[RMDB]
RNA sequence: GGGAACGACUCGAGUAGAGUCGAAAACUGAUGAAGAUCUUUAUCCUAAACCUUCCUACUAUCCUUGUCUUAUUCAUCAAGCAGAUAUUUUAGUCAAGAAUUCCAGAGAAGGCUGCUCCUAAAAUGUCUACUUGCAGCCCAAUACCAGAGCAUAAACCGCUGUCCUAAGAUUCGUCUUAGGACAGCGAAAAGAAACAACAACAACAAC
Reactivity to 2A3 in 0.01 (KOAc 150mM, MgCl2 10mM, bicine 150mM(pH8.5), 24C), signal-to-noise 2, nucleotides 027 to 156: c050u090g020a040u090g070a070a130g020a090u050c080u090u130u110a120u070c060c040u090a100a110a020c010c030u020u060c010c010u010a070c010u100a070u110c020c000u000u070g040u060c060u110u140a130u140u140c060a100u060c040a040a060g050c010a010g080a020u030a070u080u140u060u070a050g040u080c000a040a040g030a110a190u230u010c060c020a020g020a020g020a190a010g050g020c030u030g000c000u020c030c020u050a120a140a060a060u070g100u040c000u070a090c020u060u080g050c010a010g020c020c010c030a000a030u060a090c010c030a010g050a000g050c030a070u140a300a000a010c030
An RNA of 207 nucleotides, treated with 2A3 and read out base by base.
Reactivities are given for positions 27 through 156.
The RNA was probed in 150 mM KOAc, 10 mM MgCl2 and 150 mM bicine (pH 8.5) at 24 C.